Structure probing data (2A3) for a 207-nucleotide construct. The RNA was probed in 150 mM KOAc, 10 mM MgCl2 and 150 mM bicine (pH 8.5) at 24 C. It was measured as part of the RMDB library OK3TST.
[RMDB]
RNA sequence: GGGAACGACUCGAGUAGAGUCGAAAACUGUCAGGAUUAACGUCUCGCAAUUACUUUCUGGUUAACGGAACCAGCCGAGAAAUUGGCAUCCAAUUCUUUGAUUCACUUUUGGACACAAAGAAAAUAGCAAUGUCACCGUACGUUGCAACACGACGCACACGCAGUGACUGUUCGCAGUCACUGCGUGAAAAGAAACAACAACAACAAC
Reactivity to 2A3 in 0.01 (KOAc 150mM, MgCl2 10mM, bicine 150mM(pH8.5), 24C), signal-to-noise 1, nucleotides 027 to 156: c070u050g120u090c020a050g030g020a110u010u090a110a060c080g070u010c030u020c070g010c010a100a150u040u170a140c050u080u040u010c030u000g060g000u080u070a150a120c080g030g000a030a000c000c000a010g000c000c160g030a050g030a020a010a010u080u050g000g000c020a000u100c010c000a050a140u040u000c010u100u040u030g030a050u120u070c110a080c160u230u060u250u110g070g070a000c000a000c020a100a000a000g080a000a040a070a100u150a130g030c000a000a000u000g010u000c020a100c140c110g050u140a000c020g000u000u000g010c000a030a030c110a010c030g080a020c000g080c080a010